Source information
Structure probing data (DMS and 2A3) for a 207-nucleotide construct. Values cover nucleotides 27 to 156. The data come from the RNA Mapping Database (RMDB), library OK3TST. The DMS profile rests on 3,002 reads. 2A3 adducts were read by reverse transcription with SuperScript II with manganese.
[RMDB]
RNA sequence: GGGAACGACUCGAGUAGAGUCGAAAAGAGUCGGUAUUACACGGGUACAACAACCCCGGCUACGGGCGUCGAAAGCGGUUCCGGCGGCGAUGGGACCGUGAGCGUUACGUUCGUGGUUUCGGAUUCGUUUAACCGGGAUGGAACCACCCCGACGACCUAUGAAAUAGUUCUUCGGAACUAUUUCAUAAAAAGAAACAACAACAACAAC
Reactivity to DMS in 0.01 (KOAc 150mM, MgCl2 10mM, bicine 150mM(pH8.5), 24C), signal-to-noise 2, nucleotides 027 to 156: g000a160g000u000c010g030g000u000a120u010u000a130c050a100c020g000g030g000u000a110c080a060a030c050a060a020c050c010c000c010g000g000c000u000a030c050g020g020g040c040g050u000c050g020a090a110a300g020c050g010g000u000u000c000c000g010g000c060g050g020c110g010a130u020g020g020g000a000c000c000g040u000g020a080g020c080g000u000u000a070c050g010u000u000c010g000u000g010g020u000u000u000c040g030g030a110u000u000c110g000u000u000u000a140a100c010c010g010g030g020a160u000g000g000a060a300c010c080a120c030c020c010c020g010a150c000g000a060c140c000
Reactivity to 2A3 in 0.01 (KOAc 150mM, MgCl2 10mM, bicine 150mM(pH8.5), 24C), signal-to-noise 3, nucleotides 027 to 156: g070a020g020u000c010g010g040u090a090u110u130a110c090a030c020g010g000g050u090a050c020a060a010c000a010a040c090c020c000c000g010g000c000u010a010c020g030g010g000c000g010u010c020g030a180a060a000g000c010g000g000u000u010c010c000g030g050c060g080g050c100g130a130u170g000g000g000a010c000c000g000u020g010a080g150c040g050u120u160a030c020g000u000u010c000g000u000g000g000u040u130u140c000g000g020a030u110u060c060g000u010u010u060a030a060c020c010g020g010g060a050u120g070g070a040a040c040c010a030c020c060c000c000g000a000c000g010a030c000c010